[RMDB]
RNA sequence: GGGAACGACUCGAGUAGAGUCGAAAAUAAGCCUGGGAAAGACAAAACACAGCCAUCAUACAGGCUAAUAAGCUUACUUACUUGUCUAUCCAAGUUAUUUGAAAAAGUGCUGCUGCUACGCCUCAGCUAUGCGCGUAUAGUUCGCUAUACGCGCAUAAAAAGAAACAACAACAACAAC
Reactivity to 2A3 in 0.01 (KOAc 150mM, MgCl2 10mM, bicine 150mM(pH8.5), 24C), signal-to-noise 5, nucleotides 027 to 126: u100a030a010g070c010c000u060g000g060g010a060a230a040g030a020c020a010a100a080a010c160a040c020a030g010c020c000a070u090c000a010u140a260c060a060g030g000c000u010a010a080u130a070a020g040c040u090u130a080c020u040u040a020c030u040u060g010u040c030u020a060u050c010c020a020a040g020u010u090a110u070u090u160g160a110a110a040a000a000g110u050g010c010u010g000c040u000g010c010u030a050c060g040c040c020u030c010a000g020c020
Reactivity to DMS in 0.01 (KOAc 150mM, MgCl2 10mM, bicine 150mM(pH8.5), 24C), signal-to-noise 3, nucleotides 027 to 126: u000a020a020g010c110c020u000g000g000g030a060a160a030g000a020c010a040a020a170a070c230a110c180a100g000c040c030a050u050c160a130u030a110c300a090g000g010c000u040a050a080u020a080a030g000c160u010u020a080c120u010u000a050c130u010u000g000u020c010u000a070u000c050c000a030a000g010u000u000a030u010u010u000g000a030a070a070a080a080g010u000g000c010u000g030c050u010g010c080u020a020c130g000c040c000u010c050a020g010c060

An RNA of 177 nucleotides, treated with 2A3 and DMS and read out base by base. The DMS profile rests on 4,506 reads. The reactions ran in a buffer of 150 mM KOAc, 10 mM MgCl2 and 150 mM bicine (pH 8.5), at 24 C. Reactivities are given for positions 27 through 126.